[RMDB]
Structure probing data (DMS and 2A3) for a 177-nucleotide construct. The reactions ran in a buffer of 150 mM KOAc, 10 mM MgCl2 and 150 mM bicine (pH 8.5), at 24 C. For DMS the reverse transcriptase was MarathonRT. The 2A3 profile rests on 952 reads.

RNA sequence: GGGAACGACUCGAGUAGAGUCGAAAAUGGUGUAACCACACCUUCAACUUCACAAGCAUCCCCAGAAACUUCAAAUGGUCGAGAGAUUACUUCUUCUGCUUUUGUCGCCGAUGCAGGUGAAGCAGCAUGAGUCGAUGCAAUUCGUUGCAUCGACUCAAAAAGAAACAACAACAACAAC
Reactivity to DMS in 0.01 (KOAc 150mM, MgCl2 10mM, bicine 150mM(pH8.5), 24C), signal-to-noise 2, nucleotides 027 to 126: u000g000g030u000g010u000a130a160c120c240a130c050a010c000c030u010u000c150a100a090c020u000u000c010a000c050a050a100g010c040a010u000c020c070c070c110a140g020a080a110a150c070u010u010c030a040a050a050u000g000g010u000c240g010a060g000a080g020a140u000u020a030c140u000u000c020u000u000c040u000g010c020u000u000u000u000g040u000c020g020c040c120g010a080u000g000c010a030g000g030u000g000a010a010g000c130a050g020c150a130
Reactivity to 2A3 in 0.01 (KOAc 150mM, MgCl2 10mM, bicine 150mM(pH8.5), 24C), signal-to-noise 1, nucleotides 027 to 126: u090g000g000u000g020u090a070a060c050c000a010c030a000c030c000u050u240c030a110a060c010u080u040c000a020c000a090a030g010c010a030u030c000c000c000c000a070g110a120a060a000c000u050u060c040a090a050a100u090g040g000u050c040g020a020g000a010g010a180u120u140a070c050u000u090c000u070u030c020u040g040c000u070u040u030u050g040u000c020g000c100c030g020a020u070g110c000a010g060g050u030g010a000a000g120c020a020g030c020a030